RNA sequence: GGGAACGACUCGAGUAGAGUCGAAAACGGGGUUGGCUAUAGUUGAUUUCGAACCGUAUGCUUAUGUAUAUGGAAUGAUUUGUACGCUUUACGCAUGUGUACACUCACUCUCAGUUCACUCUUGUGAGAGAAGGGAGAGAGAGAUAUUUUGCGAUUAGGAUUCGGUUUUCUUCGGAAGGUUGAAUUCAAAAGAAACAACAACAACAAC
Reactivity to DMS in 0.01 (KOAc 150mM, MgCl2 10mM, bicine 150mM(pH8.5), 24C), signal-to-noise 2, nucleotides 027 to 156: c070g030g020g030g020u000u010g010g000c070u000a110u010a090g010u010u010g010a130u010u000u000c010g000a010a090c000c000g010u010a030u000g000c000u000u010a110u010g020u020a050u010a040u000g010g000a060a140u000g000a130u000u000u010g010u000a090c080g020c030u000u000u000a100c070g010c060a050u000g030u000g030u000a020c020a130c080u000c010a160c010u000c000u000c000a090g010u000u000c020a070c010u000c000u020u000g040u010g010a060g020a050g000a080a120g010g010g010a040g030a070g010a060g010a060g010a090u000a020u000u010u000u010g010c040g000a170u000u000a190
Reactivity to 2A3 in 0.01 (KOAc 150mM, MgCl2 10mM, bicine 150mM(pH8.5), 24C), signal-to-noise 2, nucleotides 027 to 156: c050g000g020g010g000u050u050g040g000c040u050a040u050a110g030u040u020g060a160u030u050u020c040g010a030a010c000c000g000u010a000u010g000c040u250u110a070u210g030u030a030u000a010u030g010g020a100a060u040g060a060u060u090u060g000u010a000c020g000c000u050u070u020a040c050g000c000a010u040g010u000g000u000a000c010a010c020u010c000a030c010u000c000u000c010a110g030u040u010c010a040c020u020c010u130u180g070u160g080a000g000a010g020a030a010g070g000g000a000g000a000g000a000g010a010g020a020u030a100u110u180u140u040g000c000g010a040u000u080a010
An RNA of 207 nucleotides, treated with DMS and 2A3 and read out base by base.
For 2A3 the reverse transcriptase was SuperScript II with manganese.
The 2A3 profile rests on 1,167 reads.